[RMDB]
Source: RMDB library OK3TST, as collected in RNAgym.
The record gives the reactivity of an RNA of 207 nucleotides to 2A3 and DMS.
For 2A3, 14,546 sequencing reads were counted.
The RNA was probed in 150 mM KOAc, 10 mM MgCl2 and 150 mM bicine (pH 8.5) at 24 C.

RNA sequence: GGGAACGACUCGAGUAGAGUCGAAAAGAAGCAGAAUAUACCACAUACUGCAUCAGGCAUUAGUUAUGGAUAUGCAGCAAUGCAAUUCAGUGACACAUAUCUGGGUGAGGAAUACAACUAUAACUACCAGGGUAAUACGUUCGAUGGGAUGUGCACCCACUGUAAGUUUUUUCGAAAACUUACAGUGAAAAGAAACAACAACAACAAC
Reactivity to 2A3 in 0.01 (KOAc 150mM, MgCl2 10mM, bicine 150mM(pH8.5), 24C), signal-to-noise 9, nucleotides 027 to 156: g090a050a010g020c050a020g100a190a040u170a030u060a150c040c060a050c030a090u130a070c010u020g040c010a040u050c040a040g080g000c040a050u070u080a090g070u050u090a050u080g020g010a060u080a070u230g010c010a010g020c030a050a080u040g000c000a020a030u040u050c030a030g060u020g100a020c020a000c010a090u100a060u110c030u050g030g000g020u080g070a030g030g080a050a050u120a090c040a080a020c060u100a040u050a250a040c040u040a060c030c030a010g050g000g000u040a070a060u090a110c060g040u040u080c040g030a040u050g030g000g000a020u060g020u030g030c030a060c020c010
Reactivity to DMS in 0.01 (KOAc 150mM, MgCl2 10mM, bicine 150mM(pH8.5), 24C), signal-to-noise 6, nucleotides 027 to 156: g020a100a130g030c040a070g000a120a110u010a120u010a240c030c040a110c040a130u000a080c020u010g000c010a110u000c050a070g010g000c050a090u000u000a100g020u000u000a100u010g010g010a070u000a060u000g010c010a040g010c080a070a100u000g040c020a070a110u010u000c040a070g020u000g020a100c040a060c060a070u000a060u000c040u000g010g010g020u000g010a080g020g010a100a090u000a090c080a050a070c070u000a060u010a050a070c050u010a050c030c020a080g020g010g030u000a040a080u000a050c060g020u000u000c050g020a130u010g010g000g010a070u000g020u000g010c020a070c040c020